[RMDB]
RNA sequence: GGGAACGACUCGAGUAGAGUCGAAAACAGGGCACGUGCACUACUAACUCAUGCACACAGAGAGGGAGACGCAUUUCUUGCUGGAGUUACGAGUUACGACUCUUACCUACUAUUGAUUUUGUUAGCUUAUCUGCUAUCCUUUCGAGGAUAGCAGAUAAAAAGAAACAACAACAACAAC
Reactivity to DMS in 0.01 (KOAc 150mM, MgCl2 10mM, bicine 150mM(pH8.5), 24C), signal-to-noise 3, nucleotides 027 to 126: c180a080g000g000g000c020a050c080g020u030g030c040a040c060u010a100c140u000a050a100c050u010c060a130u010g020c040a050c120a200c200a060g000a080g000a060g000g010g010a010g010a060c110g010c060a060u020u000u000c050u000u020g030c010u030g010g000a050g000u000u030a080c110g000a040g000u010u000a010c040g010a230c000u000c030u000u000a060c090c020u000a120c060u000a060u000u000g000a110u000u020u000u030g030u010u020a080g010c080u020
Reactivity to 2A3 in 0.01 (KOAc 150mM, MgCl2 10mM, bicine 150mM(pH8.5), 24C), signal-to-noise 5, nucleotides 027 to 126: c050a020g000g000g000c040a030c110g020u050g020c040a010c060u150a040c020u040a170a050c030u030c070a060u090g020c040a020c010a000c030a040g090a010g000a050g090g100g000a100g020a030c030g040c060a090u100u150u070c050u040u090g030c040u060g040g030a060g000u020u040a060c050g000a020g020u050u040a040c050g010a040c060u000c000u020u070a040c010c010u080a090c030u050a080u120u130g070a160u110u060u040u080g040u030u010a020g040c050u010